Conditions: 150 mM KOAc, 10 mM MgCl2 and 150 mM bicine (pH 8.5), 24 C. This 177-nucleotide RNA was probed chemically with 2A3 and DMS. Reactivities are rounded to 0.1 and cut off at 0 and 3. The data come from the RNA Mapping Database (RMDB), library OK1LIB. For DMS the reverse transcriptase was MarathonRT.
RNA sequence: GGGAACGACUCGAGUAGAGUCGAAAAGAAAUGAAUUUGCAAAAUAAAUUAUAAACCGAGUAAAACAAAUCAUGUGAUGUCAACUAUGUCCCUCUGAAUCAUCGUGUGAAAUCAUAGUUAUUGGUCACAUGAUACGCCUGUUCGCAGGCGUAUCAUGAAAAGAAACAACAACAACAAC
Reactivity to 2A3 in 0.01 (KOAc 150mM, MgCl2 10mM, bicine 150mM(pH8.5), 24C), signal-to-noise 3, nucleotides 027 to 126: g080a020a050a150u150g010a030a140u110u070u070g040c060a070a120a030a070u220a070a100a150u150u120a170u080a110a110a100c010c020g020a010g120u140a010a180a010a090c060a030a170a070u100c030a010u090g040u060g050a000u110g090u110c010a010a000c030u060a000u050g020u030c010c080c000u020c030u080g090a070a050u040c010a030u060c030g070u020g070u090g170a030a000a110u030c000a010u080a020g000u020u070a120u060u100g070g000u030c000a040
Reactivity to DMS in 0.01 (KOAc 150mM, MgCl2 10mM, bicine 150mM(pH8.5), 24C), signal-to-noise 2, nucleotides 027 to 126: g010a040a140a080u000g020a100a070u000u000u000g010c120a060a060a130a120u040a040a080a070u000u000a030u000a090a110a090c000c050g000a050g000u050a070a100a070a180c170a040a060a120u020c040a060u010g010u000g010a000u000g030u030c040a010a010c010u010a040u000g000u000c020c040c000u040c050u050g010a070a060u050c060a070u040c070g040u000g000u010g000a000a030a020u030c040a020u000a050g000u000u000a100u010u020g000g000u000c040a050